Chemical mapping of a 177-nucleotide RNA with 2A3 and DMS. Conditions: 150 mM KOAc, 10 mM MgCl2 and 150 mM bicine (pH 8.5), 24 C. DMS adducts were read by reverse transcription with MarathonRT.
RNA sequence: GGGAACGACUCGAGUAGAGUCGAAAAGAACGACCCCCAGACCCGCAUGGAGGCCGAGGAGGCCGUCAGGGCGGGCACGGCCGUGGACUUUAUCUGGACGGGCAAUCAGCGGUUCGCCCCGCGGUACCUAUUUUGCAAGCUUCGGCUUGCAAAAUAGAAAAGAAACAACAACAACAAC
Reactivity to 2A3 in 0.01 (KOAc 150mM, MgCl2 10mM, bicine 150mM(pH8.5), 24C), signal-to-noise 3, nucleotides 027 to 126: g050a080a050c120g080a040c020c000c010c020c000a030g030a260c010c030c000g040c000a010u060g040g000a010g000g000c000c000g100a160g170g120a040g040g000c020c020g000u010c010a010g020g030g030c010g000g000g000c000a020c010g000g000c020c010g030u050g030g000a070c020u080u180u110a200u060c040u080g070g020a050c030g060g010g000c040a050a090u120c030a060g030c050g080g000u070u080c030g020c000c010c010c000g030c010g020g000u060a060c000
Reactivity to DMS in 0.01 (KOAc 150mM, MgCl2 10mM, bicine 150mM(pH8.5), 24C), signal-to-noise 3, nucleotides 027 to 126: g000a140a140c110g020a150c040c000c020c020c040a200g010a150c070c020c020g000c020a050u000g000g010a100g000g010c020c000g010a250g030g030a300g010g000c020c000g020u000c030a060g040g010g030c030g000g000g000c090a090c120g000g000c060c040g000u040g010g030a070c050u010u010u100a070u030c060u010g000g000a110c100g000g000g030c010a090a050u050c110a090g010c040g000g010u000u000c110g020c070c070c000c030g020c020g020g010u000a100c140